[RMDB]
This 177-nucleotide RNA was probed chemically with 2A3 and DMS.
Source: RMDB library TTRDES, as collected in RNAgym.
The reactions ran in a buffer of 150 mM KOAc, 10 mM MgCl2 and 150 mM bicine (pH 8.5), at 24 C.
2A3 adducts were read by reverse transcription with SuperScript II with manganese.

RNA sequence: GGGAACGACUCGAGUAGAGUCGAAAAGAUAUGGAUGCGACAUGACGCGGAGAUGUAGGCUCGGAAACGAGCCUACGGAAUUGCGCAUGCGCAUCCUAAGUCAAACACCAGUGUUCGCACUGGUGAAGUGUUACGAGUUCUUCGGAACUCGUAACACAAAAGAAACAACAACAACAAC
Reactivity to 2A3 in 0.01 (KOAc 150mM, MgCl2 10mM, bicine 150mM(pH8.5), 24C), signal-to-noise 2, nucleotides 027 to 126: g040a000u010a000u180g030g020a000u000g010c000g110a190c260a000u060g250a280c030g040c140g080g200a230g000a010u090g000u000a000g010g000c000u000c010g000g000a010a040a010c000g000a020g010c000c000u000a000c010g000g000a000a000u120u180g000c010g030c000a020u010g010c010g000c000a000u020c000c000u000a000a000g000u000c040a110a020a070c010a000c020c000a010g020u020g040u180u140c290g060c200a000c000u020g030g000u000g020a050a020
Reactivity to DMS in 0.01 (KOAc 150mM, MgCl2 10mM, bicine 150mM(pH8.5), 24C), signal-to-noise 1, nucleotides 027 to 126: g010a010u000a300u030g000g000a030u000g000c020g040a170c040a010u010g010a160c000g000c010g110g070a200g010a280u010g010u000a010g010g010c000u000c000g010g000a080a080a120c000g010a000g000c000c000u010a000c000g000g000a180a140u020u030g000c030g020c000a000u000g000c010g000c010a000u000c000c010u000a000a030g010u000c030a190a100a250c010a000c000c020a040g000u010g000u000u010c220g000c010a010c000u000g000g010u000g000a010a040